Conditions: 150 mM KOAc, 10 mM MgCl2 and 150 mM bicine (pH 8.5), 24 C. The record gives the reactivity of an RNA of 177 nucleotides to 2A3. 2A3 adducts were read by reverse transcription with SuperScript II with manganese.
RNA sequence: GGGAACGACUCGAGUAGAGUCGAAAAUUGCGACUUUAAUCAUCGCGGUGCUGUCGUUUCAUGAAAAAAAAUAAUCCACCCUUGAGUUAGCGGCUCAGGUGGAUUCGUCUAUCCUAUGGCCGAUCCCCGCCAAGCACGUAUUCGUACGUGCUUGGCGAAAAGAAACAACAACAACAAC
Reactivity to 2A3 in 0.01 (KOAc 150mM, MgCl2 10mM, bicine 150mM(pH8.5), 24C), signal-to-noise 1, nucleotides 027 to 126: u150u140g100c030g010a010c000u080u030u110a040a050u100c090a020u000c020g000c030g000g000u030g000c030u100g000u020c010g010u000u040u040c070a130u250g260a010a020a000a000a010a000a000a000u300a020a000u030c000c000a000c000c030c000u000u010g020a030g000u100u100a030g030c190g060g000c010u000c000a000g020g000u000g000g010a000u000u000c000g000u010c020u030a070u000c000c000u020a090u070g000g000c000c000g020a030u080c030c000c000